[RMDB]
RNA sequence: GGGAACGACUCGAGUAGAGUCGAAAACGCCGGGAUUCGCCAGAUGGCGCACAACGCCCAGACCUCGGCGCAGACGGCGCGUGAGGCGCUGCUCGCCUCACAGCAGGGGCAAGAGGCGCUGCAAGAGCGCAGGUCAUCCAUUCGUGGAUGACCUGCGAAAAGAAACAACAACAACAAC
Reactivity to DMS in 0.01 (KOAc 150mM, MgCl2 10mM, bicine 150mM(pH8.5), 24C), signal-to-noise 1, nucleotides 027 to 126: c010g010c010c030g010g000g010a110u000u010c040g030c060c070a170g000a070u000g000g050c080g080c140a060c260a160a160c070g030c050c010c090a160g010a080c100c010u010c080g040g010c030g000c080a040g050a080c120g010g000c010g020c120g030u000g000a110g000g000c000g030c170u000g010c170u000c000g000c000c000u000c010a010c040a170g000c110a070g000g000g000g000c040a080a050g000a180g010g000c030g010c010u000g020c200a060a060g010a170g020
Reactivity to 2A3 in 0.01 (KOAc 150mM, MgCl2 10mM, bicine 150mM(pH8.5), 24C), signal-to-noise 1, nucleotides 027 to 126: c010g000c000c040g070g000g030a110u140u130c060g000c050c000a070g150a300u110g010g000c010g000c020a090c040a130a120c090g000c040c020c000a020g060a300c000c010u070c110g010g020c030g000c000a010g050a260c010g000g000c010g000c030g050u060g090a020g030g050c010g000c000u110g080c060u100c020g000c020c000u000c000a060c010a010g000c010a000g000g040g010g000c000a020a010g040a040g070g010c010g000c030u050g000c030a090a000g070a060g220